[RMDB]
RNA sequence: GGGAACGACUCGAGUAGAGUCGAAAAUCGGAUUUCCGAGCCUAUAUUGGUUUUGAAAGGACCUUUAAGUCCCUACUAUACUACAUUGUACUAGCGUAGGCCACGUAGGCCCGUAAGAUAUUAUAACCGGGGUGUAUUAAUUCGUUAAUACACCCCGAAAAGAAACAACAACAACAAC
Reactivity to 2A3 in 0.01 (KOAc 150mM, MgCl2 10mM, bicine 150mM(pH8.5), 24C), signal-to-noise 5, nucleotides 027 to 126: u040c000g030g020a040u060u060u100c020c000g000a010g030c000c000u050a050u030a070u090u120g030g020u030u070u030u200g120a100a060a010g020g020a010c020c000u100u110u130a110a020g030u010c010c000c000u010a020c010u030a020u020a050c020u020a020c010a220u110u230g090u130a100c120u030a040g060c030g110u020a010g000g040c000c000a020c020g020u020a010g000g000c000c010c000g020u050a060a000g020a090u060a040u230u230a170u070a110a010c080
Reactivity to DMS in 0.01 (KOAc 150mM, MgCl2 10mM, bicine 150mM(pH8.5), 24C), signal-to-noise 2, nucleotides 027 to 126: u000c060g000g000a300u010u030u000c060c000g000a040g000c030c000u000a000u000a110u030u000g000g010u000u000u000u040g000a100a080a120g000g000a020c010c020u010u070u070a130a220g000u000c000c000c010u000a110c050u000a080u020a110c070u000a010c060a110u010u030g010u040a070c220u010a060g010c050g010u000a010g000g000c020c010a010c120g000u000a030g000g000c030c000c000g000u020a080a080g010a110u020a040u010u010a050u010a050a120c180